[RMDB]
RNA sequence: GGGAACGACUCGAGUAGAGUCGAAAAGAUAUGGAAUGAUGAACUACUUCGAAAGUUACAGCUUGGAUUUACAGCUCGGAAACGAGCUGUUGUCAGCUGUAAUGAGUAGAAGCAUCAUUCCUAAGUCCAUGAUUGUUUAGUUCGCUAAACAAUCAUGAAAAGAAACAACAACAACAAC
Reactivity to DMS in 0.01 (KOAc 150mM, MgCl2 10mM, bicine 150mM(pH8.5), 24C), signal-to-noise 5, nucleotides 027 to 126: g010a080u010a300u000g000g010a020a010u000g000a020u010g000a130a060c090u010a300c010u000u000c000g000a170a190a300g000u000u000a010c010a000g000c010u000u010g020g000a030u000u010u000a000c000a010g020c010u010c000g000g000a080a090a210c000g010a020g000c000u000g000u000u000g000u000c000a020g000c000u000g010u000a000a000u000g000a060g010u010a100g000a010a000g000c000a000u000c000a010u000u000c000c000u000a020a100g010u010c030
Reactivity to 2A3 in 0.01 (KOAc 150mM, MgCl2 10mM, bicine 150mM(pH8.5), 24C), signal-to-noise 5, nucleotides 027 to 126: g030a040u140a060u290g010g010a000a010u020g030a010u020g010a090a140c120u280a060c000u300u000c010g030a070a020a020g020u010u010a000c000a000g020c030u190u300g220g010a050u300u280u230a020c000a000g000c000u000c000g030g050a070a140a070c010g010a000g000c000u000g000u000u000g000u000c000a010g000c000u010g000u000a000a000u010g000a000g000u000a000g000a000a000g000c000a000u000c000a000u000u000c000c000u000a040a020g000u020c030